[RMDB]
RNA sequence: GGGAACGACUCGAGUAGAGUCGAAAAACGUCGGCUCCAUACGUGGAGCCGACGAAAGUAUCAUGAAUUAGAAACCUACUUAUUACAUAGUUUACAUAAGAAGCGUGAUGAUGCUGCUGAUGCUGAAGUUCCAUAACUCUUUCGAGAGUUAUGGAACAAAAGAAACAACAACAACAAC
Reactivity to 2A3 in 0.01 (KOAc 150mM, MgCl2 10mM, bicine 150mM(pH8.5), 24C), signal-to-noise 3, nucleotides 027 to 126: a000c000g040u000c000g030g000c000u000c000c000a010u000a050c300g070u030g000g000a000g000c000c030g000a010c010g010a000a000a000g000u020a000u030c020a020u060g110a050a090u110u070a140g100a140a110a020c010c000u010a040c030u100u040a020u030u090a020c050a100u190a130g150u240u170u090a100c060a050u070a100a020g080a090a000g050c020g080u030g030a050u030g030a020u010g030c010u010g010c010u050g020a060u070g040c010u020g040a160a030
Reactivity to DMS in 0.01 (KOAc 150mM, MgCl2 10mM, bicine 150mM(pH8.5), 24C), signal-to-noise 2, nucleotides 027 to 126: a110c040g020u000c000g010g000c000u000c000c010a000u000a080c210g020u010g000g060a000g010c070c000g000a000c040g000a000a020a050g000u000a020u000c010a010u010g020a100a080u010u020a050g000a130a140a100c080c000u020a170c030u000u000a020u000u030a080c150a120u020a080g000u040u030u050a050c190a060u000a000a000g010a100a050g000c120g020u000g000a100u000g000a020u000g000c020u000g000c060u000g000a060u030g000c000u010g000a100a140